[RMDB]
RNA sequence: GGGAACGACUCGAGUAGAGUCGAAAAGCCGUAGCAUUACGGCGCUAUAUAGCAUGCUAAUAUUAGCUAUAUACGUACGAUUAAUCGUAAUAUGCUAAUCGGCUAAUUAAUCGGCAUGCAUCGAUGCUAACGCUCACACCUUCGGGUGUGAGCGUUAAAAAGAAACAACAACAACAAC
Reactivity to DMS in 0.01 (KOAc 150mM, MgCl2 10mM, bicine 150mM(pH8.5), 24C), signal-to-noise 1, nucleotides 027 to 126: g000c040c000g010u000a010g010c210a090u040u000a060c000g010g030c020g000c150u000a040u000a050u020a130g040c000a040u000g000c060u000a100a070u030a040u000u000a020g050c000u000a120u000a040u010a070c110g030u000a010c070g010a080u000u020a120a080u000c010g000u000a020a050u000a150u000g010c100u010a110a100u010c290g000g000c010u000a020a020u000u000a030a050u000c030g000g020c000a020u000g000c030a070u020c090g000a010u000g020c050
Reactivity to 2A3 in 0.01 (KOAc 150mM, MgCl2 10mM, bicine 150mM(pH8.5), 24C), signal-to-noise 1, nucleotides 027 to 126: g020c000c010g000u000a010g030c190a160u060u210a030c020g000g000c010g000c100u010a030u000a000u070a240g000c040a030u010g080c040u110a060a050u050a080u130u010a000g000c030u000a000u010a010u010a190c040g020u020a000c030g000a060u000u290a110a240u110c000g030u010a110a100u070a040u190g040c090u090a100a110u090c080g000g000c000u010a010a010u030u090a070a080u040c060g020g020c060a020u040g000c060a030u070c040g060a030u090g000c010